[RMDB]
RNA sequence: GGGAACGACUCGAGUAGAGUCGAAAAGCUGCCUCUGACGUCCUUAAGGGUGGUAAAGCGGGUCUCCCCCGGAAACCGGGCCGCGCCUGGCGCUAGCACGGGUAUGCGUGGAGGUCGACCCUGGCCGAUAUCAUGACCUAUUCGUAGGUCAUGAUAUAAAAGAAACAACAACAACAAC
Reactivity to 2A3 in 0.01 (KOAc 150mM, MgCl2 10mM, bicine 150mM(pH8.5), 24C), signal-to-noise 5, nucleotides 027 to 126: g010c010u020g020c000c010u080c030u060g060a050c040g070u050c020c010u070u130a070a080g040g010g020u080g020g010u090a120a070a020g080c070g000g020g030u010c040u030c020c010c000c010c000g030g070a120a060a030c020c000g000g020g000c000c010g010c010g020c040c170u090g080g000c000g000c050u060a040g000c020a020c040g020g030g010u150a050u170g050c020g010u080g010g060a110g020g030u030c090g030a080c000c010c000u010g050g010c010c010g020
Reactivity to DMS in 0.01 (KOAc 150mM, MgCl2 10mM, bicine 150mM(pH8.5), 24C), signal-to-noise 8, nucleotides 027 to 126: g010c040u000g000c020c000u000c040u000g000a100c090g010u000c050c040u000u010a150a140g010g000g020u010g010g010u010a040a080a110g020c090g010g000g000u000c030u010c020c020c010c020c010g010g010a050a100a110c030c010g010g000g030c020c190g010c060g010c010c090u010g010g000c030g020c040u000a070g010c030a040c040g000g000g000u010a080u010g010c050g020u010g010g000a060g010g010u000c120g000a060c020c010c010u000g010g000c030c070g000

Chemical mapping of a 177-nucleotide RNA with 2A3 and DMS.
The RNA was probed in 150 mM KOAc, 10 mM MgCl2 and 150 mM bicine (pH 8.5) at 24 C.
Values cover nucleotides 27 to 126.
2A3 adducts were read by reverse transcription with SuperScript II with manganese.
For DMS, 16,936 sequencing reads were counted.
For 2A3, 10,268 sequencing reads were counted.
It was measured as part of the RMDB library OK2TRN.